[RMDB]
RNA sequence: GGGAACGACUCGAGUAGAGUCGAAAAGAUAUGGAUUGCGGAGACAUGAAGGCUCGGAAACGAGUCUUCAACAGCUCCACAAUCCUAAGUCAAAAGUUUUAAGCUCACUUCGGUGAGCUUAAAACAAGAUUAUUUUGUCGUUCGCGACAAAAUAAUCAAAAGAAACAACAACAACAAC
Reactivity to DMS in 0.01 (KOAc 150mM, MgCl2 10mM, bicine 150mM(pH8.5), 24C), signal-to-noise 2, nucleotides 027 to 126: g000a020u000a220u010g000g000a010u000u020g000c040g000g000a030g010a090c080a260u010g000a000a000g000g030c010u000c000g010g000a030a020a120c000g010a010g010u000c000u010u000c000a010a070c300a120g010c000u000c000c000a000c010a010a010u000c000c010u000a030a050g010u000c010a110a100a100a170g000u000u000u000u000a000a000g010c000u000c000a020c000u000u010c230g020g000u000g020a030g020c000u000u000a000a000a010a000c000a070a060
The record gives the reactivity of an RNA of 177 nucleotides to DMS. It was measured as part of the RMDB library TTRDEL.